[RMDB]
RNA sequence: GGGAACGACUCGAGUAGAGUCGAAAACGCGAAGUGGCAUACGGAUACGACGCGGAACGUCUUCUUCACUCAAAAGGAUCGGAAGGGGGUUUCUUUCGCGAUCUCAAACGCUGGAUCGGUUGCACGGGAAUCGUGCUACCUUCGGGUAGCACGAUUCAAAAGAAACAACAACAACAAC
Reactivity to 2A3 in 0.01 (KOAc 150mM, MgCl2 10mM, bicine 150mM(pH8.5), 24C), signal-to-noise 1, nucleotides 027 to 126: c070g000c000g010a050a090g040u080g100g000c080a060u130a250c080g020g040a020u030a080c050g010a000c020g010c010g060g000a020a020c020g110u000c010u010u070c000u080u000c010a030c090u030c040a000a060a030a280g130g000a050u160c120g010g010a000a010g040g010g030g020g050u000u100u000c000u030u030u020c140g050c030g100a120u000c020u000c010a040a150a010c090g030c060u070g000g050a040u050c050g050g070u080u040g000c060a040c080g020g090
Reactivity to DMS in 0.01 (KOAc 150mM, MgCl2 10mM, bicine 150mM(pH8.5), 24C), signal-to-noise 2, nucleotides 027 to 126: c090g020c080g030a060a110g020u010g010g020c010a070u000a140c130g020g000a090u000a120c080g000a110c050g000c050g000g010a060a090c170g000u000c040u000u010c020u000u000c070a090c030u000c040a080a110a130a250g000g000a040u020c130g000g010a020a010g030g000g010g010g020u000u010u000c050u010u000u000c000g020c010g000a080u000c030u020c080a040a080a080c140g010c120u000g000g020a030u000c040g000g000u000u000g020c070a110c140g000g000
An RNA of 177 nucleotides, treated with 2A3 and DMS and read out base by base.
For DMS the reverse transcriptase was MarathonRT.
For 2A3, 1,081 sequencing reads were counted.